RNA sequence: GGGAACGACUCGAGUAGAGUCGAAAAUAAUUGCGAUACUUGGUGGUAGCUGUGUGAGUAAUUUGGCGUUUUGACAAAUAAUUUCGUGAUUACCGCCAUUGGAACCACCUGUUAAUAAAACGACAUCUACGUCCCAUUUAUUCGUAAAUGGGACGUAAAAAGAAACAACAACAACAAC
Reactivity to 2A3 in 0.01 (KOAc 150mM, MgCl2 10mM, bicine 150mM(pH8.5), 24C), signal-to-noise 4, nucleotides 027 to 126: u100a000a030u140u090g080c060g030a030u070a140c030u080u060g000g000u050g010g020u060a070g060c030u050g050u060g080u040g230a190g040u010a050a030u000u100u180g090g030c100g010u070u060u040u130g180a130c070a090a040a010u190a090a040u150u040u150c060g000u040g050a040u010u010a000c000c000g030c120c060a060u020u090g080g030a030a010c010c010a020c010c010u030g060u030u150a140a190u130a130a140a010a020c000g060a040c050a050u010c000
Reactivity to DMS in 0.01 (KOAc 150mM, MgCl2 10mM, bicine 150mM(pH8.5), 24C), signal-to-noise 3, nucleotides 027 to 126: u020a080a070u010u010g030c100g000a120u030a030c090u000u000g030g040u000g000g000u000a070g020c070u000g020u010g000u000g000a070g000u000a050a050u000u000u000g010g000c020g020u000u000u030u010g020a070c120a030a100a100u050a100a120u010u010u000c060g020u010g000a030u000u000a070c130c030g000c030c010a060u020u010g000g000a090a070c040c000a030c030c030u000g010u000u000a020a090u020a070a040a080a060c130g010a090c160a070u010c110